[RMDB]
RNA sequence: GGGAACGACUCGAGUAGAGUCGAAAAGAUAUGGAUCUAAGCCAUGGUGGUACCGGGAGCAAGUUCAUCGGAAACGAUGAAACUUGCUUUGAUCGGUACGUAACAUCCAUGGCUUAGAUCCUAAGUCCUUUGGAAGAAUCUUCGGAUUCUUCCAAAGAAAAGAAACAACAACAACAAC
Reactivity to DMS in 0.01 (KOAc 150mM, MgCl2 10mM, bicine 150mM(pH8.5), 24C), signal-to-noise 2, nucleotides 027 to 126: g010a080u010a240u010g010g010a020u000c000u000a010a000g010c000c000a020u000g020g040u000g010g010u010a000c000c010g000g000g000a020g000c000a000a010g000u000u000c010a000u000c000g020g000a180a110a290c000g010a000u000g000a040a030a030c000u000u000g000c010u000u000u010g000a110u020c000g000g000u010a010c000g010u010a020a080c230a030u010c010c010a020u000g010g010c000u000u000a000g010a000u000c000c010u000a030a090g000u010c050

Structure probing data (DMS) for a 177-nucleotide construct.
It was measured as part of the RMDB library TTRINS.